RNA sequence: GGGAACGACUCGAGUAGAGUCGAAAAAACUUGGAGAACGUGUACGCCAAGCUAUCUUAAACACUGUUAAAUUUUGUGACCACAUGGUCAAGGCUGGUUUAGUCGGUGUGCUCACACUAGACAACCAAAACUAGUAGGUUCGCCUACUAGAAAAGAAACAACAACAACAAC
Reactivity to 2A3 in 0.01 (KOAc 150mM, MgCl2 10mM, bicine 150mM(pH8.5), 24C), signal-to-noise 9, nucleotides 027 to 129: a000a020c050u030u030g030g010a070g030a130a040c060g060u060g020u180a020c050g010c010c000a020a010g000c030u070a080u110c050u050u130a080a110a020c080a030c070u080g090u110u120a060a110a210u160u170u090u100g080u030g010a020c000c000a070c080a250u210g000g000u000c010a000a010g060g000c050u030g000g030u040u040u080a020g000u000c010g000g000u000g010u020g070c050u080c050a030c000a010c010u020a080g000a010c000a000a010c000c000a000a010a000a060
Reactivity to DMS in 0.01 (KOAc 150mM, MgCl2 10mM, bicine 150mM(pH8.5), 24C), signal-to-noise 8, nucleotides 027 to 129: a040a100c010u060u010g020g020a060g020a060a040c140g000u010g000u070a060c170g020c020c010a050a030g000c010u000a030u020c040u020u050a020a070a060c130a070c060u020g050u010u020a050a070a090u060u030u040u020g000u040g030a050c020c030a140c120a060u050g000g000u000c030a030a040g020g010c110u000g010g000u010u020u050a030g010u000c030g000g000u030g030u000g060c180u000c140a090c020a000c000u000a020g000a000c040a000a000c030c040a020a030a070a090
Structure probing data (2A3 and DMS) for a 170-nucleotide construct. The reactions ran in a buffer of 150 mM KOAc, 10 mM MgCl2 and 150 mM bicine (pH 8.5), at 24 C. It was measured as part of the RMDB library 15KLIB. For 2A3, 39,734 sequencing reads were counted.